[RMDB]
RNA sequence: GGGAACGACUCGAGUAGAGUCGAAAAAGUUAUAUGCUUGUCUCAAAGAUUAAGCCAUGCAUGUCUAAGUACACACGAAUUAAAAGUGAAACCGCAAAAGGCUCAUUAUAUCAGUUAUGGUUCCUUAUGAUCUUCAGUUAUUCGUAACUGAAGAUCAAAAAGAAACAACAACAACAAC
Reactivity to DMS in 0.01 (KOAc 150mM, MgCl2 10mM, bicine 150mM(pH8.5), 24C), signal-to-noise 5, nucleotides 027 to 126: a070g010u000u020a100u000a050u040g010c020u010u010g010u010c010u000c030a090a110a140g020a130u040u030a050a050g020c000c040a100u000g010c030a060u010g000u010c040u010a080a110g020u020a040c060a090c050a040c060g000a080a070u040u050a030a090a130a140g000u000g010a080a090a080c140c110g040c050a030a070a090a100g000g000c010u010c080a060u010u030a050u030a050u000c070a110g000u010u000a090u010g010g010u000u000c000c010u000u000a190
Reactivity to 2A3 in 0.01 (KOAc 150mM, MgCl2 10mM, bicine 150mM(pH8.5), 24C), signal-to-noise 5, nucleotides 027 to 126: a010g160u200u070a240u040a020u300g040c000u040u030g010u040c000u030c030a150a170a010g070a050u200u140a040a030g000c020c020a040u090g020c020a030u040g080u000c030u100a110a020g190u210a020c030a000c000a000c030g020a040a110u180u080a180a140a010a000g020u020g040a090a020a020c000c040g010c050a050a040a000a000g030g000c030u000c030a010u010u190a050u030a050u170c080a060g050u050u090a070u130g020g000u000u010c010c000u040u030a070
The record gives the reactivity of an RNA of 177 nucleotides to DMS and 2A3. DMS adducts were read by reverse transcription with MarathonRT. The data come from the RNA Mapping Database (RMDB), libraries RFM100 and RFMREP. Conditions: 150 mM KOAc, 10 mM MgCl2 and 150 mM bicine (pH 8.5), 24 C.